Conditions: 150 mM KOAc, 10 mM MgCl2 and 150 mM bicine (pH 8.5), 24 C. This 177-nucleotide RNA was probed chemically with 2A3. Values are in units of 0.01, from 0 to 300, in steps of 10. 2A3 adducts were read by reverse transcription with SuperScript II with manganese.

RNA sequence: GGGAACGACUCGAGUAGAGUCGAAAAUAAAGGAAGAAGAGAGAGAGUACAGCCUUAGUUCAGAUCACAUAUGACUAUCUUUUGCGAGUCUGAUCGAUACUCUGAUGAAGGCUGUACCCUCUCUCUUGGUCUAGCAACCCUUCGGGGUUGCUAGACCAAAAGAAACAACAACAACAAC
Reactivity to 2A3 in 0.01 (KOAc 150mM, MgCl2 10mM, bicine 150mM(pH8.5), 24C), signal-to-noise 1, nucleotides 027 to 126: u180a010a040a000g120g000a080a120g080a110a000g000a020g000a000g000a000g000a000g000u000a010c000a000g050c000c000u100u080a010g040u070u010c000a000g000a000u030c080a000c110a040u190a010u140g100a010c000u000a010u160c170u010u300u110u130g040c180g040a000g000u000c000u000g000a100u250c000g000a000u040a120c090u000c000u090g000a100u050g100a000a000g010g000c000u000g000u000a000c000c000c010u000c000u000c000u000c000u000u000